[RMDB]
RNA sequence: GGGAACGACUCGAGUAGAGUCGAAAAGAUAUGGAGUUUAGCAUCGAAGAACUACAGUUAAGCGGUAUUCGGAAACGAAUACCGGAUACACUGUAGGGAGAUGGCUAAACUCCUAAGUCAAAACUUUACGUAAAUGCUUCGGCAUUUACGUAAAGAAUCAAAACACUGUGUUCGCACAGUGUUUUGAAAAAGAAACAACAACAACAAC
Reactivity to DMS in 0.01 (KOAc 150mM, MgCl2 10mM, bicine 150mM(pH8.5), 24C), signal-to-noise 1, nucleotides 027 to 156: g000a000u000a060u010g000g000a040g010u000u000u000a010g020c000a190u010c000g010a090a210g020a120a270c000u000a020c010a030g020u000u000a010a050g000c020g000g000u010a000u000u000c010g030g010a000a010a040c020g050a060a020u000a000c000c010g010g000a080u010a060c040a000c030u000g000u000a010g020g000g010a030g020a000u010g000g000c000u000a000a000a030c000u000c000c000u000a000a050g000u000c020a060a100a130a100c000u000u000u000a020c010g020u000a010a010a020u000g000c020u040u000c300g020g000c010a000u000u000u000a010c000g010u010a000a000a010g010a140a150
Reactivity to 2A3 in 0.01 (KOAc 150mM, MgCl2 10mM, bicine 150mM(pH8.5), 24C), signal-to-noise 1, nucleotides 027 to 156: g010a010u000a000u030g000g000a000g000u000u000u010a000g010c000a000u010c020g150a300a010g000a000a000c000u000a000c000a000g000u010u020a000a010g000c000g010g000u000a000u010u000c000g010g000a000a000a000c000g010a000a000u000a000c000c000g000g000a000u040a000c000a000c000u000g000u000a000g000g010g000a010g000a000u030g080g050c000u000a000a000a010c000u000c000c000u000a020a010g000u000c000a000a010a000a050c000u000u000u000a000c000g000u000a000a000a010u000g000c000u020u090c190g090g000c010a000u000u000u000a000c000g000u000a000a000a000g000a000a040
The record gives the reactivity of an RNA of 207 nucleotides to DMS and 2A3. It was measured as part of the RMDB library RNAMAK. For 2A3, 4,534 sequencing reads were counted. The RNA was probed in 150 mM KOAc, 10 mM MgCl2 and 150 mM bicine (pH 8.5) at 24 C. For DMS the reverse transcriptase was MarathonRT. 2A3 adducts were read by reverse transcription with SuperScript II with manganese.